RNA sequence: GGGAACGACUCGAGUAGAGUCGAAAAGAUAUGGAGAUGUCACAGCAACAGCCUGGUGUCGGAAACGACACCCAGGACAUGCUGUACAUCUCCUAAGUCAAAGUUGGAGACCUUCGGGUCUCCAACAUCUUCAACGUACGUUCGCGUACGUUGAAGAAAAAGAAACAACAACAACAAC
Reactivity to DMS in 0.01 (KOAc 150mM, MgCl2 10mM, bicine 150mM(pH8.5), 24C), signal-to-noise 2, nucleotides 027 to 126: g000a010u000a020u000g000g000a030g010a010u000g000u000c300a020c000a010g000c000a220a070c210a110g000c000c000u000g000g020u000g010u000c000g000g000a010a010a010c000g010a010c000a000c190c080c060a000g020g010a010c020a220u000g010c000u030g000u000a020c000a000u000c000u000c010c000u000a000a020g000u000c010a120a070a130g000u020u010g000g000a030g010a000c000c010u000u020c260g020g010g020u000c000u000c000c000a020a000c000a070
Reactivity to 2A3 in 0.01 (KOAc 150mM, MgCl2 10mM, bicine 150mM(pH8.5), 24C), signal-to-noise 2, nucleotides 027 to 126: g010a000u020a020u050g030g000a000g000a020u000g050u200c300a060c000a080g000c070a170a300c050a280g020c020c000u010g000g000u010g010u000c000g000g000a000a020a000c000g000a010c000a020c060c010c010a000g000g000a000c040a240u300g000c000u020g020u000a000c000a000u000c000u000c000c000u000a000a000g000u010c030a080a050a140g000u000u000g000g010a010g000a010c000c000u050u050c300g180g000g000u000c000u000c000c000a000a020c000a010
This 177-nucleotide RNA was probed chemically with DMS and 2A3. For 2A3, 3,574 sequencing reads were counted. Values cover nucleotides 27 to 126. Source: RMDB library TTRDES, as collected in RNAgym. 2A3 adducts were read by reverse transcription with SuperScript II with manganese.